[RMDB]
RNA sequence: GGGAACGACUCGAGUAGAGUCGAAAACGCGCAAAUGGGGUUGGGGACCGGGGUUCUUGCGGUGAUCGGUGGAACGGUCGCGAUCGUCGGGUUCUUGGCGAUGACCACCGGCGCGAUCGUGGCCGUGGUUAUUCACUAGGUUCGCCUAGUGAAUAACAAAAGAAACAACAACAACAAC
Reactivity to DMS in 0.01 (KOAc 150mM, MgCl2 10mM, bicine 150mM(pH8.5), 24C), signal-to-noise 4, nucleotides 027 to 126: c090g020c080g010c080a070a110a100u000g000g000g000g010u010u010g000g000g000g000a100c110c080g000g010g000g010u000u010c060u010u010g010c070g000g000u000g010a050u000c070g020g000u010g020g010a140a040c010g000g010u000c000g020c000g010a000u000c000g020u010c030g000g000g020u000u010c190u020u000g010g000c050g010a120u020g000a120c020c010a100c020c000g010g010c070g010c090g010a030u000c010g020u000g010g000c000c000g010u000g000
Reactivity to 2A3 in 0.01 (KOAc 150mM, MgCl2 10mM, bicine 150mM(pH8.5), 24C), signal-to-noise 5, nucleotides 027 to 126: c060g020c000g010c030a030a150a210u140g030g020g070g080u250u170g020g010g030g030a020c060c040g020g000g000g020u100u080c060u130u140g010c050g010g020u080g020a090u130c050g050g000u060g040g050a050a000c010g000g000u000c000g000c010g020a030u060c000g030u010c020g000g060g020u210u110c090u160u170g030g000c070g290a300u200g070a130c000c020a070c010c010g030g000c020g000c040g030a010u000c000g000u010g000g000c010c000g000u000g000